[RMDB]
RNA sequence: GGGAACGACUCGAGUAGAGUCGAAAAUCAUUGUCACAACAUCGAUCUUGUGCCGGUGGAUAUUCACCGAAAAAUUCUAAUAAAUACUUCCGUCUACAUUGAUCCAAUUUGCAAUAGCCAAUCAUGCGUGAGUCUAAUUGUUCGCAAUUAGACUCACAAAAGAAACAACAACAACAAC
Reactivity to DMS in 0.01 (KOAc 150mM, MgCl2 10mM, bicine 150mM(pH8.5), 24C), signal-to-noise 1, nucleotides 027 to 126: u010c040a060u010u000g000u020c020a080c070a040a090c130a070u020c160g010a050u000c050u000u000g020u000g000c090c010g030g070u010g010g010a160u000a060u000u010c040a060c080c030g020a020a050a110a120a110u000u010c060u010a110a120u000a050a090a100u010a060c000u040u000c010c010g010u000c040u000a060c030a040u000u000g000a120u010c030c040a040a040u000u020u000g000c060a060a090u000a110g030c040c050a120a100u000c110a020u000g010c300
Reactivity to 2A3 in 0.01 (KOAc 150mM, MgCl2 10mM, bicine 150mM(pH8.5), 24C), signal-to-noise 2, nucleotides 027 to 126: u060c000a000u090u060g030u040c020a000c000a000a070c010a110u060c000g070a060u040c040u010u030g000u010g040c020c000g000g000u010g030g000a010u060a120u220u250c080a080c050c000g070a080a020a010a000a030u200u100c080u110a120a190u120a190a200a030u090a060c010u040u010c000c000g030u000c040u040a050c020a080u050u100g020a010u080c040c020a080a090u060u060u130g020c010a040a080u020a080g030c000c040a080a080u020c030a040u070g000c010
Structure probing data (DMS and 2A3) for a 177-nucleotide construct. The RNA was probed in 150 mM KOAc, 10 mM MgCl2 and 150 mM bicine (pH 8.5) at 24 C. 2A3 adducts were read by reverse transcription with SuperScript II with manganese. Source: RMDB library OK2TST, as collected in RNAgym.